[RMDB]
RNA sequence: GGGAACGACUCGAGUAGAGUCGAAAAGAAUACGUCCCUGUUCUUUGUACACACCGCCCGUCGUUAUCGAAGAUGGAGUCAGGCGCGAACAAGCGAGAGCGAGUGAGUGCAGGAUUCUAGAUGUGAUAAGCGCUCAUUUAUUCGUAAAUGAGCGCUUAAAAGAAACAACAACAACAAC
Reactivity to 2A3 in 0.01 (KOAc 150mM, MgCl2 10mM, bicine 150mM(pH8.5), 24C), signal-to-noise 1, nucleotides 027 to 126: g160a050a030u110a000c020g090u070c000c000c000u020g060u060u030c000u000u090u110g020u000a000c040a000c000a000c040c000g020c000c000c000g110u150c060g040u010u220a110u140c060g080a110a010g070a040u040g000g000a000g000u020c040a040g080g000c000g000c000g040a000a000c010a040a030g010c000g000a110g000a000g110c010g000a000g000u010g000a040g020u020g060c000a000g070g000a020u040u000c020u000a040g020a130u110g040u040g040a010u030
Reactivity to DMS in 0.01 (KOAc 150mM, MgCl2 10mM, bicine 150mM(pH8.5), 24C), signal-to-noise 2, nucleotides 027 to 126: g000a080a100u010a140c240g020u010c000c000c040u030g000u000u000c020u030u000u000g030u010a080c180a000c020a080c020c050g050c070c000c090g040u050c040g030u010u010a060u000c000g020a090a240g020a050u000g000g000a040g050u010c020a000g000g010c000g060c020g060a090a000c010a020a280g000c020g010a150g000a300g000c020g000a300g000u000g000a300g020u000g020c000a060g010g000a000u000u000c040u000a000g000a100u000g040u010g010a080u000